[RMDB]
RNA sequence: GGGAACGACUCGAGUAGAGUCGAAAAAAGAUUAAUCCAGCACAUCCCUGGUGUAAAGGCAAUGCUUGGAGUGCAAUCUUAGGAUAAGGUUUGUAGUAUUGGAUAGCUCUAACUGCCUUAGCUAACCGAGGUCAGAUAGUUUCGACUAUCUGACCUCAAAAGAAACAACAACAACAAC
Reactivity to 2A3 in 0.01 (KOAc 150mM, MgCl2 10mM, bicine 150mM(pH8.5), 24C), signal-to-noise 2, nucleotides 027 to 126: a020a010g130a040u150u120a010a070u050c030c010a010g040c040a020c000a140u070c000c000c000u030g120g020u150g020u090a110a120a030g010g000c000a000a080u050g000c060u060u090g010g000a020g010u060g030c040a030a060u000c040u070u060a050g130g000a140u050a080a050g050g000u030u190u100g090u110a060g000u020a090u040u210g140g060a160u060a120g000c030u000c010u020a020a050c020u010g010c000c010u000u000a000g010c030u000a050a030c010c070
Reactivity to DMS in 0.01 (KOAc 150mM, MgCl2 10mM, bicine 150mM(pH8.5), 24C), signal-to-noise 2, nucleotides 027 to 126: a040a030g000a050u010u000a150a050u000c010c040a050g010c080a050c110a120u000c170c010c010u030g000g000u010g010u010a110a070a020g000g020c130a060a050u000g000c050u010u000g020g000a010g020u000g030c100a030a000u000c010u010u000a080g010g010a050u000a030a030g010g000u010u000u000g010u000a070g030u000a130u000u000g040g030a100u000a120g000c060u010c020u000a050a040c060u000g000c010c010u020u000a070g000c040u010a070a120c140c100